Chemical mapping of a 177-nucleotide RNA with 2A3 and DMS. It was measured as part of the RMDB library M2PK90. The RNA was probed in 150 mM KOAc, 10 mM MgCl2 and 150 mM bicine (pH 8.5) at 24 C.

RNA sequence: GGGAACGACUCGAGUAGAGUCGAAAAGUAGUGCUCGAGAGGGAGGCUGUCUCGCAGAGCUUUUAGAUCUUCUGAUCUUUCCCUCCUCCAUAUCGCUUAUGCGUCAAGCGAUAGACGCAUAAUUAAACUUUAGCGUAUCUUUCGAGAUACGCUAAAGAAAAGAAACAACAACAACAAC
Reactivity to 2A3 in 0.01 (KOAc 150mM, MgCl2 10mM, bicine 150mM(pH8.5), 24C), signal-to-noise 2, nucleotides 027 to 126: g030u080a010g100u020g130c070u060c090g050a050g010a020g070g110g000a040g110g070c110u080g140u100c000u000c040g030c060a020g010a040g090c000u010u010u010u010a000g000a020u010c000u280u070c180u300g010a020u010c000u010u010u000c000c000c000u000c010c000u000c000c010a050u090a050u130c070g030c070u040u010a000u040g000c000g000u000c030a030a100g150c020g180a070u040a090g000a000c000g020c010a010u010a010a030u080u150a040a120a050
Reactivity to DMS in 0.01 (KOAc 150mM, MgCl2 10mM, bicine 150mM(pH8.5), 24C), signal-to-noise 4, nucleotides 027 to 126: g010u000a060g010u000g000c040u000c030g020a040g020a280g000g000g010a050g010g020c070u000g000u000c020u000c040g040c130a050g010a220g020c010u010u000u000u000a000g000a010u000c000u010u020c280u020g000a020u000c000u000u000u000c000c000c000u010c030c010u000c010c030a090u000a040u000c060g010c270u000u000a020u000g010c000g000u010c010a090a100g000c240g020a130u010a050g000a010c000g010c000a010u010a010a030u000u000a010a070a100